[RMDB]
The data come from the RNA Mapping Database (RMDB), library M2PK50.
Chemical mapping of a 177-nucleotide RNA with DMS and 2A3.
2A3 adducts were read by reverse transcription with SuperScript II with manganese.
DMS adducts were read by reverse transcription with MarathonRT.
Values cover nucleotides 27 to 126.
The reactions ran in a buffer of 150 mM KOAc, 10 mM MgCl2 and 150 mM bicine (pH 8.5), at 24 C.
As a SHAPE reagent, 2A3 marks flexible, mostly unpaired nucleotides at the ribose 2'-OH.
RNA sequence: GGGAACGACUCGAGUAGAGUCGAAAAGACCGUUAGUUCGCUAACGGUCAAAUAAAAUCAGCGGUAACGUGGCGUAAAAUAUUACCGCUGAACGCCUCGUUAAAAACAGGAGCUUCGGCUCCUGUAAUCUGUUUGUAUGGUUCGCCAUACAAACAGAAAAAGAAACAACAACAACAAC
Reactivity to DMS in 0.01 (KOAc 150mM, MgCl2 10mM, bicine 150mM(pH8.5), 24C), signal-to-noise 2, nucleotides 027 to 126: g000a010c000c000g010u000u000a010g010u000u000c170g010c000u000a000a000c000g020g030u000c000a000a070a040u000a070a040a150a090u000c010a000g020c000g020g010u000a000a010c080g030u000g010g030c220g010u000a080a050a070a070u010a050u010u000a000c000c000g000c000u000g000a000a050c160g000c040c020u020c180g020u000u000a020a140a030a150a030c000a010g000g000a020g010c000u010u000c170g020g000c000u000c000c000u000g000u020a010a040
Reactivity to 2A3 in 0.01 (KOAc 150mM, MgCl2 10mM, bicine 150mM(pH8.5), 24C), signal-to-noise 1, nucleotides 027 to 126: g000a000c000c000g000u000u000a000g010u030u030c240g000c140u000a000a000c000g000g000u000c000a000a000a000u030a000a000a000a050u050c000a000g050c000g000g020u010a030a000c050g000u050g160g040c200g140u100a000a170a110a020u120a030u000u010a010c000c000g000c030u000g000a000a020c060g030c010c030u100c030g090u070u120a140a100a000a010a010c000a000g010g020a000g010c000u050u070c160g100g000c000u000c000c010u010g000u010a000a000